[RMDB]
RNA sequence: GGGAACGACUCGAGUAGAGUCGAAAAGGCAUGGUCACAGGUGAACCGCACAUGCCCGUCCGCCACACCUGGGGCGAGGUCCAUGAGCGUGCUCGUUGCAUCGCGGGCGGCCUGGCCGCCGCGGGUGCACUCGGACUUGGUUCGCCAAGUCCGAGUGAAAAGAAACAACAACAACAAC
Reactivity to DMS in 0.01 (KOAc 150mM, MgCl2 10mM, bicine 150mM(pH8.5), 24C), signal-to-noise 3, nucleotides 027 to 126: g010g010c010a010u010g000g020u010c180a100c140a130g000g030u010g000a080a100c070c050g020c120a130c040a010u000g010c060c000c030g000u010c020c010g000c130c130a240c030a020c050c040u000g000g000g000g000c000g000a060g010g020u010c020c020a050u000g000a120g010c010g010u020g040c010u000c030g020u000u010g030c110a070u010c100g000c000g020g000g030c020g020g040c010c040u000g020g000c000c000g010c010c020g000c010g000g010g030u000g000
This 177-nucleotide RNA was probed chemically with DMS.
Reactivities are rounded to 0.1 and cut off at 0 and 3.
Reactivities are given for positions 27 through 126.